[RMDB]
RNA sequence: GGGAACGACUCGAGUAGAGUCGAAAAGUUCCGACCGAAACAUGUCGAAGCAUGACCUCUGCCGAGGUAGUCUGUGGGGUAGAGCGACGGAUUGGGGGACCGCACUCCGAGAGGAGUGCGCCCCCCUGCAUAAAUAUUACUUCGGUAAUAUUUAUGCAAAAGAAACAACAACAACAAC
Reactivity to DMS in 0.01 (KOAc 150mM, MgCl2 10mM, bicine 150mM(pH8.5), 24C), signal-to-noise 2, nucleotides 027 to 126: g010u000u000c010c000g020a090c020c040g000a110a090a080c060a070u000g000u000c050g010a130a130g020c040a060u000g010a150c050c010u000c010u010g020c130c070g010a080g010g000u020a050g020u020c070u010g010u000g000g020g010g010u010a040g010a110g020c050g010a090c060g010g000a140u020u010g000g020g030g010g030a050c250c050g000c030a010c000u000c050c000g000a190g000a280g000g000a060g000u000g030c070g010c040c000c000c000c000c000u010
Reactivity to 2A3 in 0.01 (KOAc 150mM, MgCl2 10mM, bicine 150mM(pH8.5), 24C), signal-to-noise 1, nucleotides 027 to 126: g000u060u000c020c000g000a030c040c030g050a040a070a000c030a080u100g020u060c060g090a050a010g000c030a030u070g040a060c000c010u030c010u050g030c060c040g010a010g060g060u050a040g060u010c070u090g070u070g000g060g000g000u050a040g020a010g060c040g040a020c040g010g040a080u140u190g030g000g000g020g000a010c010c040g000c050a000c030u010c000c000g000a030g020a040g080g000a000g000u020g000c050g000c000c000c000c030c000c000u000
The record gives the reactivity of an RNA of 177 nucleotides to DMS and 2A3. DMS adducts were read by reverse transcription with MarathonRT. The reactions ran in a buffer of 150 mM KOAc, 10 mM MgCl2 and 150 mM bicine (pH 8.5), at 24 C. It was measured as part of the RMDB library RFMREP. Values cover nucleotides 27 to 126.